[RMDB]
RNA sequence: GGGAACGACUCGAGUAGAGUCGAAAAUUGCCCAUUCACUUUGGAAACUAGUGAAUGUGGUGUCAAAAAAGGCGUAAAUUAAACGCUUUGCAGCCUUUUCCUGCCCUUAAAUUUGAUACCUUUGGUGUUACUUGAAUAACUUCGGUUAUUCAAGUAAAAAAGAAACAACAACAACAAC
Reactivity to DMS in 0.01 (KOAc 150mM, MgCl2 10mM, bicine 150mM(pH8.5), 24C), signal-to-noise 9, nucleotides 027 to 126: u020u040g010c000c000c000a010u000u000c000a000c000u000u020u000g010g000a160a120a180c060u000a010g010u000g000a020a000u000g000u010g010g010u010g010u000c060a000a020a040a040a030a030g010g020c020g010u000a040a050a070u020u020a090a140a120c160g000c150u000u000u010g010c060a110g010c040c030u010u000u000u000c070c040u010g000c020c050c040u010u010a040a070a140u010u010u010g000a040u010a020c020c010u000u020u010g000g010u010g020
Reactivity to 2A3 in 0.01 (KOAc 150mM, MgCl2 10mM, bicine 150mM(pH8.5), 24C), signal-to-noise 9, nucleotides 027 to 126: u100u070g020c000c000c000a000u000u000c000a000c010u090u080u060g100g070a070a080a060c040u010a030g000u000g000a000a010u030g050u130g000g000u030g040u060c040a040a040a020a010a020a000g020g000c020g020u040a060a040a080u100u190a140a180a040c120g030c000u020u000u030g010c040a060g010c010c000u030u010u020u020c010c030u040g030c010c000c020u100u130a110a160a170u130u070u080g050a050u080a100c010c000u090u050u130g070g010u120g040

An RNA of 177 nucleotides, treated with DMS and 2A3 and read out base by base. As a SHAPE reagent, 2A3 marks flexible, mostly unpaired nucleotides at the ribose 2'-OH. Reactivities are rounded to 0.1 and cut off at 0 and 3.